This 177-nucleotide RNA was probed chemically with DMS and 2A3. The reactions ran in a buffer of 150 mM KOAc, 10 mM MgCl2 and 150 mM bicine (pH 8.5), at 24 C. The 2A3 profile rests on 3,907 reads.
[RMDB]
RNA sequence: GGGAACGACUCGAGUAGAGUCGAAAACAUCAUUCUCAUGGGUAUAAAUGCGAGAAGAGAGAAUCUCAUUCAAAGAUGAGUAUGGUAUGUCACUGAUUUGUUACAGUGAGCGUGUCAAAGCAGGGCACUCUGCUAUCCUUUUCGAAGGAUAGCAGAGAAAAGAAACAACAACAACAAC
Reactivity to DMS in 0.01 (KOAc 150mM, MgCl2 10mM, bicine 150mM(pH8.5), 24C), signal-to-noise 4, nucleotides 027 to 126: c090a060u000c100a080u000u000c010u000c010a080u010g020g030g030u000a130u010a040a080a080u000g010c110g010a080g020a080a050g010a150g000a160g020a120a090u000c010u000c010a020u010u010c100a080a120a110g000a020u000g000a020g000u020a090u000g010g000u010a060u000g000u000c000a040c000u000g000a120u000u000u010g000u000u000a060c040a040g010u000g010a040g000c110g020u020g000u000c030a040a080a110g010c070a070g000g010g010c110a110
Reactivity to 2A3 in 0.01 (KOAc 150mM, MgCl2 10mM, bicine 150mM(pH8.5), 24C), signal-to-noise 4, nucleotides 027 to 126: c020a040u070c020a020u080u000c010u010c020a020u110g090g000g120u170a140u080a240a170a050u120g090c070g020a040g030a120a030g080a030g010a010g080a110a110u020c020u000c030a070u130u110c100a190a100a010g140a040u030g000a000g010u060a050u060g090g000u060a060u120g060u040c020a020c120u010g030a160u090u110u130g090u090u090a040c010a020g030u010g090a070g080c080g020u040g010u010c000a100a000a070g040c020a040g040g000g020c000a010